Chemical mapping of a 177-nucleotide RNA with DMS and 2A3. Values cover nucleotides 27 to 126. The reactions ran in a buffer of 150 mM KOAc, 10 mM MgCl2 and 150 mM bicine (pH 8.5), at 24 C. The DMS profile rests on 1,705 reads.

RNA sequence: GGGAACGACUCGAGUAGAGUCGAAAAUUAAAGGUGGUGGUGGAGGAGGUACGCCUCCAGCUGCUCAGCCGACGUACCGCACACACGCCUUUUCGGCAUAGUGCAGCAAUAGGGUAUCCAUAAAAAAGUAUGUACGGUGAUUCGUCACCGUACAUACAAAAGAAACAACAACAACAAC
Reactivity to DMS in 0.01 (KOAc 150mM, MgCl2 10mM, bicine 150mM(pH8.5), 24C), signal-to-noise 2, nucleotides 027 to 126: u000u000a060a060a080g020g010u000g010g030u000g030g020u020g000g010a050g000g000a060g010g010u000a020c080g030c010c000u000c020c030a120g020c030u000g010c050u010c050a120g000c050c010g000a070c100g020u000a040c050c010g010c070a060c130a060c120a100c130g000c030c080u010u010u000u010c100g010g020c020a070u000a080g020u000g010c010a030g000c030a110a060u000a090g010g000g020u010a050u010c050c030a090u000a000a050a050a060a120a080
Reactivity to 2A3 in 0.01 (KOAc 150mM, MgCl2 10mM, bicine 150mM(pH8.5), 24C), signal-to-noise 2, nucleotides 027 to 126: u070u060a090a000a000g050g040u070g010g020u010g000g000u030g010g030a020g020g030a040g040g020u010a000c030g060c010c000u020c020c000a010g020c010u030g000c010u020c090a040g000c000c000g010a020c020g040u010a010c030c020g010c000a020c000a020c010a010c070g090c050c080u120u130u070u070c010g000g000c010a010u120a110g030u020g040c010a010g010c010a050a080u080a130g020g000g060u070a050u080c020c040a080u240a030a090a020a000a000a000